[RMDB]
Source: RMDB library OK1LIB, as collected in RNAgym. This 177-nucleotide RNA was probed chemically with 2A3 and DMS. Reactivities are given for positions 27 through 126. The RNA was probed in 150 mM KOAc, 10 mM MgCl2 and 150 mM bicine (pH 8.5) at 24 C. 2A3 adducts were read by reverse transcription with SuperScript II with manganese. DMS adducts were read by reverse transcription with MarathonRT.
RNA sequence: GGGAACGACUCGAGUAGAGUCGAAAAGCUCGGUGACACCGCGUCUGCCUGGGUCCGAAAGAUUUCUUGUCGCAAAUCUACAAGACAUUGGUUAACGUGUGGGCCGCUUGAGCGGCCGCUCGGCGGGAGUUGGGUGGCGCUUCGGUGCUAUCCAACUAAAAGAAACAACAACAACAAC
Reactivity to 2A3 in 0.01 (KOAc 150mM, MgCl2 10mM, bicine 150mM(pH8.5), 24C), signal-to-noise 3, nucleotides 027 to 126: g010c010u000c010g020g020u030g020a010c010a010c030c020g020c010g020u000c020u030g010c000c000u020g050g000g020u000c010c000g050a050a050a000g020a000u010u010u000c010u030u110g080u060c050g010c070a020a010a040u030c020u020a020c030a040a010g010a010c010a030u010u050g030g010u050u090a040a010c010g000u020g010u080g040g040g010c000c000g000c000u110u190g020a010g000c000g000g010c000c010g000c010u010c010g030g000c000g000g030g000
Reactivity to DMS in 0.01 (KOAc 150mM, MgCl2 10mM, bicine 150mM(pH8.5), 24C), signal-to-noise 3, nucleotides 027 to 126: g010c020u000c020g020g010u020g020a130c070a080c020c030g010c060g010u000c040u010g000c010c000u000g020g000g020u010c010c010g000a130a130a060g000a030u010u000u000c020u020u030g010u020c140g030c190a020a040a040u020c010u000a040c210a120a060g000a030c050a060u010u000g010g000u010u010a090a120c020g020u000g000u010g000g010g010c020c020g030c030u000u020g010a090g000c020g010g000c030c020g000c010u000c020g000g000c010g000g000g000